An RNA of 177 nucleotides, treated with 2A3 and DMS and read out base by base. The 2A3 profile rests on 1,391 reads. For 2A3 the reverse transcriptase was SuperScript II with manganese. For DMS, 1,958 sequencing reads were counted. It was measured as part of the RMDB library OK2TST.

RNA sequence: GGGAACGACUCGAGUAGAGUCGAAAAGGAGUGGCAGUGGGAACAGAAGUGCAAGGGAUCGUCGAAGGAUUCGUCCAAUGUUCAGGAGAUGAAUAUCACUUCAUUUCGGUUCUCAGAUAGACGACAACAAUACCUCCCCGUUCGCGGGGAGGUAUUGAAAAGAAACAACAACAACAAC
Reactivity to 2A3 in 0.01 (KOAc 150mM, MgCl2 10mM, bicine 150mM(pH8.5), 24C), signal-to-noise 1, nucleotides 027 to 126: g110g010a060g020u090g000g060c060a030g070u020g030g000g000a010a000c020a040g040a100a010g030u000g060c110a040a000g000g020g000a000u010c010g060u010c020g030a020a030g050g010a020u020u080c060g030u020c010c020a060a090u200g040u130u120c060a060g080g070a160g070a020u040g010a040a010u110a020u120c030a030c070u000u000c010a010u000u030u040c000g010g020u050u000c040u000c010a020g050a050u080a030g100a010c050g050a020c030a030a000
Reactivity to DMS in 0.01 (KOAc 150mM, MgCl2 10mM, bicine 150mM(pH8.5), 24C), signal-to-noise 3, nucleotides 027 to 126: g000g000a140g050u000g020g000c110a100g000u010g010g000g030a030a020c060a040g010a030a010g000u000g010c260a050a030g020g010g010a050u000c080g020u010c070g030a140a130g010g000a070u020u000c120g010u010c040c060a100a100u010g020u010u000c130a120g000g030a270g000a020u000g010a070a060u020a040u000c100a060c100u000u000c000a030u000u020u000c040g000g030u000u000c000u000c030a020g010a130u000a130g000a060c050g000a100c230a060a160